[RMDB]
RNA sequence: GGGAACGACUCGAGUAGAGUCGAAAAGAUAUGGAGCUCACUCCCCACCGACCCUGUCAGCUCGGAAACGAGCUGGGAGCCUGGUCGAGGUGAGCUCCUAAGUCAAACACGUUGUUCGCAACGUGAAGAUCUAUCACCUCUUCGGAGGUGAUAGAUCAAAAGAAACAACAACAACAAC
Reactivity to 2A3 in 0.01 (KOAc 150mM, MgCl2 10mM, bicine 150mM(pH8.5), 24C), signal-to-noise 2, nucleotides 027 to 126: g100a020u230a100u300g010g000a000g010c010u000c010a010c030u140c000c070c010c010a050c030c000g020a000c030c000c000u140g290u300c010a000g010c000u000c020g000g070a050a100a040c010g000a000g000c010u020g000g000g000a000g110c060c300u070g000g030u030c020g000a010g000g010u000g000a000g000c000u000c000c000u000a010a000g030u020c060a020a070a070c010a000c020g000u010u010g030u110u080c300g000c150a010a000c020g000u000g020a020a040
Reactivity to DMS in 0.01 (KOAc 150mM, MgCl2 10mM, bicine 150mM(pH8.5), 24C), signal-to-noise 2, nucleotides 027 to 126: g020a100u010a300u000g000g000a020g010c000u000c000a020c020u000c070c060c000c090a300c090c010g010a000c010c010c010u000g000u000c000a010g000c010u010c000g000g000a140a100a230c030g030a020g050c020u000g000g000g000a010g000c260c190u000g000g010u000c050g000a080g010g010u000g010a000g010c020u000c000c000u000a000a090g010u000c080a080a090a240c000a000c000g010u000u000g010u020u020c180g010c010a010a000c000g010u000g000a080a140